[RMDB]
RNA sequence: GGGAACGACUCGAGUAGAGUCGAAAAGUAUCCAUGUUCGCAUGGAUACGAAAUAUGCGCGCGUAUAUCCGGUUGGCUGGAUGCGCGCGUCUGGCUGGCCGGUGGUGCUAGUCUUCGGACUAGCAAACCUAAGAUGAAGUUUCGACUUCAUCUUAGGAAAAGAAACAACAACAACAAC
Reactivity to DMS in 0.01 (KOAc 150mM, MgCl2 10mM, bicine 150mM(pH8.5), 24C), signal-to-noise 7, nucleotides 027 to 126: g000u000a000u000c000c000a010u000g010u000u020c210g020c010a010u000g000g000a010u000a000c000g010a050a070a080u010a050u000g010c030g010c040g000c050g020u000a070u000a090u010c000c000g010g010u000u000g000g010c010u000g010g010a020u000g000c030g010c120g010c010g010u000c020u000g000g000c010u000g000g010c010c000g000g000u000g010g010u000g000c000u000a000g000u000c000u000u020c200g020g000a010c000u000a000g010c000a020a050a120
Reactivity to 2A3 in 0.01 (KOAc 150mM, MgCl2 10mM, bicine 150mM(pH8.5), 24C), signal-to-noise 6, nucleotides 027 to 126: g000u000a000u000c000c010a010u010g030u020u070c240g000c120a000u000g000g000a000u000a000c000g000a000a010a000u220a040u080g030c050g000c010g000c040g040u100a080u020a050u240c010c000g030g000u040u050g060g000c030u030g060g010a010u020g010c090g010c020g000c000g020u000c000u010g020g010c000u000g010g010c000c020g040g030u100g040g080u060g000c000u000a000g000u000c010u020u030c210g080g000a000c000u000a000g000c000a010a020a010